RNA sequence: GGGAACGACUCGAGUAGAGUCGAAAACAUGACCUGUUCGCAGGUCAUGAAAGUGGACGAGGAGCGAUGUACCCACACAAAACAAGACAUCGCAAAAUAAAAAAAGCAAGUGCUUCGGCACUUGCAAUCACUUAUUGGAGUUCGCUCCAAUAAGUGAAAAAGAAACAACAACAACAAC
Reactivity to 2A3 in 0.01 (KOAc 150mM, MgCl2 10mM, bicine 150mM(pH8.5), 24C), signal-to-noise 3, nucleotides 027 to 126: c000a000u000g000a000c000c000u000g020u010u060c170g010c060a000g000g020u020c000a000u000g000a010a000a010g030u030g010g020a030c110g050a100g160g090a170g060c000g000a000u010g000u050a070c000c040c000a000c010a000c010a010a070a030a020c060a030a010g070a020c000a010u010c000g000c010a010a030a040a020u120a010a040a010a010a010a010a000g010c000a000a010g000u000g000c000u040u070c120g050g000c010a000c000u000u000g010c010a010a010
Reactivity to DMS in 0.01 (KOAc 150mM, MgCl2 10mM, bicine 150mM(pH8.5), 24C), signal-to-noise 3, nucleotides 027 to 126: c010a000u010g010a000c000c000u000g000u010u010c250g060c000a020g010g000u000c010a000u000g000a050a060a100g000u000g000g000a180c130g010a110g020g010a150g000c000g010a010u000g010u000a120c050c020c010a030c020a160c120a020a060a060a050c120a050a120g010a020c010a000u010c000g010c010a110a050a100a040u050a010a010a030a130a080a060a080g000c010a010a010g010u000g000c000u000u010c190g010g010c000a000c010u000u010g000c000a020a010